This 177-nucleotide RNA was probed chemically with 2A3. The data come from the RNA Mapping Database (RMDB), library M2PK50.
RNA sequence: GGGAACGACUCGAGUAGAGUCGAAAACCACAGAUCUUCGGAUCUGUGGAAACAACAAAUACUGUCAGUUGAGACAGACACAAAUACAUUGAGUGAACAAUGAAAGCGAUUGCUUCGGCAAUCGCAAGUGUUUUCUAUGCUUCGGCAUAGAAAACACAAAAGAAACAACAACAACAAC
Reactivity to 2A3 in 0.01 (KOAc 150mM, MgCl2 10mM, bicine 150mM(pH8.5), 24C), signal-to-noise 1, nucleotides 027 to 126: c000c010a000c000a020g000a000u000c010u030u240c220g180g020a000u000c000u000g030u000g000g010a050a060a000c050a070a000c030a040a120a090u150a190c020u000g000u010c020a140g030u090u130g170a120g010a070c050a010g060a030c000a000c010a030a140a010u210a110c000a000u030u060g020a100g160u170g090a200a000c000a050a060u040g160a090a170a000g000c010g020a020u000u000g020c000u050u070c240g060g000c000a000a000u000c000g040c010a000a000